[RMDB]
RNA sequence: GGGAACGACUCGAGUAGAGUCGAAAAUGCCCUCGGCGGACUGCUCAGUAACACGUGGAUAACCUGCCCAAGGGUCUGGGAUAACCCCGGGAAACUGGGGAUAAUACCGGAUGGAUCACUAGUGCUGAUCAAGAAACCGGUUCGCCGGUUUCUUGAUAAAAGAAACAACAACAACAAC
Reactivity to DMS in 0.01 (KOAc 150mM, MgCl2 10mM, bicine 150mM(pH8.5), 24C), signal-to-noise 2, nucleotides 027 to 126: u030g000c000c020c000u010c010g060g010c050g000g000a020c020u020g000c120u000c030a050g000u000a140a090c060a120c200g020u000g000g000a110u020a160a090c040c000u010g020c020c040c030a140a100g000g010g000u000c000u000g000g020g010a080u020a150a110c010c000c000c000g000g000g000a090a080a190c010u000g010g010g000g000a020u020a040a110u020a110c000c000g000g020a040u000g000g030a040u000c000a040c060u040a210g020u000g000c030u010g000
Source: RMDB library RFM100, as collected in RNAgym.
This 177-nucleotide RNA was probed chemically with DMS.
The RNA was probed in 150 mM KOAc, 10 mM MgCl2 and 150 mM bicine (pH 8.5) at 24 C.